Source: RMDB library OK1LIB, as collected in RNAgym. Structure probing data (DMS and 2A3) for a 177-nucleotide construct. Values are in units of 0.01, from 0 to 300, in steps of 10. The reactions ran in a buffer of 150 mM KOAc, 10 mM MgCl2 and 150 mM bicine (pH 8.5), at 24 C. The DMS profile rests on 68,525 reads.
[RMDB]
RNA sequence: GGGAACGACUCGAGUAGAGUCGAAAAGUUCGUCCAGGUUCGGGCUGCCUGACGCCAGUAGCUUUCGUGUCGCUUUUGUCUAUGUCAUGGGUUGACGUACGGUCAGGUCGCAGCGCAGCACACGGGAUCAAGGGAUGCGGUUCGCUGCGUCCCUUGAAAAAGAAACAACAACAACAAC
Reactivity to DMS in 0.01 (KOAc 150mM, MgCl2 10mM, bicine 150mM(pH8.5), 24C), signal-to-noise 7, nucleotides 027 to 126: g010u000u010c020g010u010c020c030a100g000g010u010u010c070g010g000g000c020u000g000c010c000u000g000a060c040g000c120c010a060g000u010a070g010c040u000u000u010c050g020u010g000u000c030g010c080u000u010u020u020g010u030c110u030a090u040g000u010c020a040u010g000g000g000u020u010g010a050c030g010u010a040c080g000g000u000c040a070g000g010u010c150g000c040a050g000c060g000c080a050g010c030a050c040a090c040g000g000g000a140
Reactivity to 2A3 in 0.01 (KOAc 150mM, MgCl2 10mM, bicine 150mM(pH8.5), 24C), signal-to-noise 5, nucleotides 027 to 126: g010u010u020c000g020u020c040c010a030g000g020u030u060c010g020g020g010c010u010g010c000c010u000g020a020c000g030c030c010a070g010u020a010g020c000u030u050u060c020g020u020g030u020c020g030c040u010u070u110u090g060u060c050u070a060u150g020u030c020a030u050g100g000g010u030u090g020a040c020g020u050a010c020g010g010u010c020a010g010g020u010c020g000c010a010g010c020g000c010a010g000c010a020c000a010c050g010g010g030a040